[RMDB]
RNA sequence: GGGAACGACUCGAGUAGAGUCGAAAAGAAUUGCUGGGGUUAGAUUGGCCAGACCCUGGCAACCAGAGCACUGUAGAGACUAGCAGGGCAUUAAAACAAGUAGCCGGCCUGUCUGCGGCUGAAAAUGCACGAAAGGUUAGUUCGCUAACCUUUCGUGAAAAGAAACAACAACAACAAC
Reactivity to DMS in 0.01 (KOAc 150mM, MgCl2 10mM, bicine 150mM(pH8.5), 24C), signal-to-noise 2, nucleotides 027 to 126: g000a180a210u010u030g010c000u010g000g000g000g030u000u000a040g030a190u000u000g000g020c000c070a200g010a000c020c000c000u010g000g000c000a000a010c040c080a120g030a110g000c000a030c070u000g020u000a080g000a090g030a080c070u010a110g020c000a110g000g050g060c000a200u010u000a060a040a220a120c190a020a110g000u000a080g000c000c000g000g000c010c020u010g010u000c020u000g000c050g000g000c030u010g000a030a030a060a040u030g000
Reactivity to 2A3 in 0.01 (KOAc 150mM, MgCl2 10mM, bicine 150mM(pH8.5), 24C), signal-to-noise 3, nucleotides 027 to 126: g020a040a100u050u040g010c010u000g000g000g000g010u000u040a060g060a300u100u100g060g040c000c000a000g000a010c000c000c000u000g000g000c000a000a000c000c020a030g020a000g040c000a000c040u020g000u160a030g030a000g030a090c020u030a020g040c010a000g020g020g000c020a030u120u160a020a100a090a090c140a070a040g030u030a010g050c010c030g000g050c010c010u020g040u000c010u060g060c020g050g000c000u000g020a030a040a000a000u160g020

An RNA of 177 nucleotides, treated with DMS and 2A3 and read out base by base. High 2A3 reactivity points to a flexible backbone, as in loops and unpaired stretches. For DMS the reverse transcriptase was MarathonRT. For DMS, 3,098 sequencing reads were counted.